RNA sequence: GGGAACGACUCGAGUAGAGUCGAAAACAAACAACAAUUACGACUACGCUCUUGCUGCAUAAGUAAUAGCGUACCUGGCUAUUUAAAUAGCCACGUCAAUCCUGCUGAUGUCUGAUAAGCUGGUGCGGCGACAAUCAUCAGGCUAGCAGCCUAUUGUGUAAAUCGUAGGGUUCGCCCUACGAUUUACAAAAGAAACAACAACAACAAC
Reactivity to 2A3 in 0.01 (KOAc 150mM, MgCl2 10mM, bicine 150mM(pH8.5), 24C), signal-to-noise 5, nucleotides 027 to 156: c050a020a090a000c060a030a020c050a100a100u200u130a150c100g050a060c090u020a000c020g000c000u000c000u010u010g000c040u020g000c060a110u090a300a010g020u020a020a000u000a010g000c000g000u000a000c000c010u040g000g000c000u010a050u060u240u110a120a300a060u020a000g000c000c000a000c010g010u000c010a010a040u030c000c010u030g020c000u020g030a040u090g050u040c030u010g050a060u020a090a020g010c000u050g000g150u120g100c090g030g010c000g040a030c060a060a090u130c080a010u010c010a010g000g000c000u040a040g050c040a020g010c030c050u180a200u130u200g040u010